Structure probing data (2A3) for a 177-nucleotide construct. For 2A3, 869 sequencing reads were counted. The reactions ran in a buffer of 150 mM KOAc, 10 mM MgCl2 and 150 mM bicine (pH 8.5), at 24 C. For 2A3 the reverse transcriptase was SuperScript II with manganese.

[RMDB]
RNA sequence: GGGAACGACUCGAGUAGAGUCGAAAACAAAACAACAAAAGCGCCGGCUAACUCCGCGCAAGCAGCCGCAAGGAUGUGGAAAGAACCACAUCCAACAAACAAAACAAAAACAAAGAACAAAACAAAAGCAUGUGUACGACUUCGGUCGUACGCAUGCAAAAGAAACAACAACAACAAC
Reactivity to 2A3 in 0.01 (KOAc 150mM, MgCl2 10mM, bicine 150mM(pH8.5), 24C), signal-to-noise 2, nucleotides 027 to 126: c010a000a040a020a000c050a070a000c080a070a050a050a090g030c050g050c090c040g140g000c000u130a100a000c070u020c080c000g000c000g060c000a010a010g000c000a000g000c010c020g060c030a050a090g000g000a000u000g000u010g000g000a300a210a170g070a140a120c000c000a010c000a010u000c000c010a000a000c040a000a000a000c000a000a090a040a000c030a020a070a080a010a000c120a140a110a000g110a080a000c040a090a030a040a000c040a000a100a020a000